[RMDB]
RNA sequence: GGGAACGACUCGAGUAGAGUCGAAAACUCACUUCCAAAAGGAGGAGCGGGGGGACUUGGAACACGAGGGGACCAGUCCAGUCCGUGGGAACUACCCCGGAACUCCCGCUCUCCACACUCCUUCCCCACACACUGAGCUUCGGCUCAGUGAAAAGAAACAACAACAACAAC
Reactivity to DMS in 0.01 (KOAc 150mM, MgCl2 10mM, bicine 150mM(pH8.5), 24C), signal-to-noise 6, nucleotides 027 to 129: c070u020c050a190c100u070u070c080c030a070a080a040a090g000g000a000g030g020a010g010c020g000g000g000g000g000g000a020c030u030u130g030g030a010a020c080a000c140g050a130g030g000g010g060a110c040c000a000g010u050c010c000a100g020u010c000c040g060u110g060g000g000a120a120c190u160a250c050c020c030c070g000g000a070a130c230u020c020c020c010g030c030u000c030u020c010c050a000c200a180c060u030c020c020u030u020c020c010c020c010a070c220a190
Reactivity to 2A3 in 0.01 (KOAc 150mM, MgCl2 10mM, bicine 150mM(pH8.5), 24C), signal-to-noise 8, nucleotides 027 to 129: c020u040c040a110c060u200u120c110c040a030a070a020a060g010g030a020g010g020a010g000c010g000g010g000g000g000g000a000c000u050u190g010g030a100a030c090a030c090g050a180g020g090g000g010a000c010c010a010g010u000c020c000a030g030u000c010c020g050u300g000g010g030a120a090c090u300a230c120c000c020c010g000g000a020a030c040u030c000c000c000g000c000u000c000u010c000c000a010c000a010c000u020c000c000u030u050c000c000c000c000a020c000a000